[RMDB]
RNA sequence: GGGAACGACUCGAGUAGAGUCGAAAAGAUAUGGACGGUGUUCCAACAUGCCAAGAUCGAUAAGAAGAUGUCGGAAACGACAUACUUCUUUUGACGAUCGACGCAUGUUGGAACACCGUCCUAAGUCGAAUACUAUCACGUUCGCGUGAUAGUAUUCAAAAGAAACAACAACAACAAC
Reactivity to DMS in 0.01 (KOAc 150mM, MgCl2 10mM, bicine 150mM(pH8.5), 24C), signal-to-noise 5, nucleotides 027 to 126: g020a080u000a300u010g000g000a020c000g010g020u010g000u000u000c020c010a010a000c010a010u000g000c000c000a050a300g010a000u000c000g020a180u000a020a010g000a020a010g010a050u000g010u000c000g000g010a120a100a230c000g010a010c010a000u000a050c000u000u000c000u000u000u000u000g020a200c140g000a010u000c000g010a300c300g000c000a000u000g010u000u000g020g010a000a000c000a000c000c000g000u000c000c000u000a010a070g010u000c100
This 177-nucleotide RNA was probed chemically with DMS. The DMS profile rests on 6,036 reads. The RNA was probed in 150 mM KOAc, 10 mM MgCl2 and 150 mM bicine (pH 8.5) at 24 C. Source: RMDB library TTRINS, as collected in RNAgym. For DMS the reverse transcriptase was MarathonRT. Reactivities are given for positions 27 through 126.